Structure probing data (DMS and 2A3) for a 177-nucleotide construct. Values cover nucleotides 27 to 126. The RNA was probed in 150 mM KOAc, 10 mM MgCl2 and 150 mM bicine (pH 8.5) at 24 C. The data come from the RNA Mapping Database (RMDB), library TTRDES.
[RMDB]
RNA sequence: GGGAACGACUCGAGUAGAGUCGAAAAGAUAUGGAUCCCACCUAGCUAGAAAGAGGUUCGGAAACGAACUGAUUUCUUGGACCUAGUUGGGAUCCUAAGUCAAAACAUCGGUGUUCGCACCGAUGAAUCUAUUUUAUCUGUUCGCAGAUAAAAUAGAAAAAGAAACAACAACAACAAC
Reactivity to DMS in 0.01 (KOAc 150mM, MgCl2 10mM, bicine 150mM(pH8.5), 24C), signal-to-noise 7, nucleotides 027 to 126: g000a040u010a300u010g000g000a000u000c000c010c000a010c070c000u000a010g000c040u000a010g010a010a020a020g000a300g000g000u000u000c000g000g000a120a130a270c010g010a010a010c000u010g010a270u000u000u000c010u000u010g010g010a120c300c000u000a000g010u000u000g000g010g010a000u000c010c000u000a000a070g000u000c040a090a120a130a180c010a010u000c000g010g010u000g010u000u020c270g020c000a010c000c000g010a000u000g000a070a090
Reactivity to 2A3 in 0.01 (KOAc 150mM, MgCl2 10mM, bicine 150mM(pH8.5), 24C), signal-to-noise 3, nucleotides 027 to 126: g020a020u070a060u150g000g010a010u000c000c000c000a000c010c000u000a010g030c010u020a030g010a000a020a010g030a020g030g020u000u020c010g000g070a070a070a060c000g000a000a000c000u010g000a010u020u000u010c020u010u110g110g070a080c040c010u000a000g000u010u010g000g040g000a000u000c000c000u010a010a000g000u020c020a010a000a050a200c000a000u010c000g000g010u030g070u140u120c300g020c130a000c010c010g000a000u000g000a010a020